RNA sequence: GGGAACGACUCGAGUAGAGUCGAAAACUCUGGUGAGACCCUAUCUAGUAUAGCAAUCCACCAAGCAGGUGAUUUCACACAAUUCAGGUUCUCAGAGAAAAUGCGCCCUGACUUGACAGGUAUGGUCGCUAUUACGUAGUUUCGACUACGUAAUAGCAAAAGAAACAACAACAACAAC
Reactivity to 2A3 in 0.01 (KOAc 150mM, MgCl2 10mM, bicine 150mM(pH8.5), 24C), signal-to-noise 9, nucleotides 027 to 126: c020u010c020u040g050g050u090g040a120g010a050c030c010c000u000a020u020c060u040a050g090u110a080u040a060g020c030a020a040u030c070c010a010c010c010a040a050g100c090a060g020g060u040g050a080u010u100u090c060a060c000a000c010a080a070u070u060c030a020g040g020u090u020c040u000c020a020g050a010g050a100a100a010a030u110g020c030g020c010c000c000u020g030a060c030u050u050g030a020c030a040g030g050u100a090u110g070g020u050c060
Reactivity to DMS in 0.01 (KOAc 150mM, MgCl2 10mM, bicine 150mM(pH8.5), 24C), signal-to-noise 5, nucleotides 027 to 126: c030u020c010u010g000g010u000g000a100g000a060c120c290c030u000a030u010c040u010a100g040u040a070u010a070g010c080a090a050u010c040c030a040c010c000a080a110g020c170a090g000g010u000g000a090u010u000u010c030a060c120a170c110a050a080u030u020c070a070g000g020u000u020c020u000c020a080g000a120g020a040a050a030a070u020g020c080g010c300c000c010u000g000a060c050u010u000g030a100c070a040g000g000u010a030u010g000g000u010c040

Chemical mapping of a 177-nucleotide RNA with 2A3 and DMS.
The 2A3 profile rests on 14,167 reads.
For DMS, 8,774 sequencing reads were counted.
Reactivities are rounded to 0.1 and cut off at 0 and 3.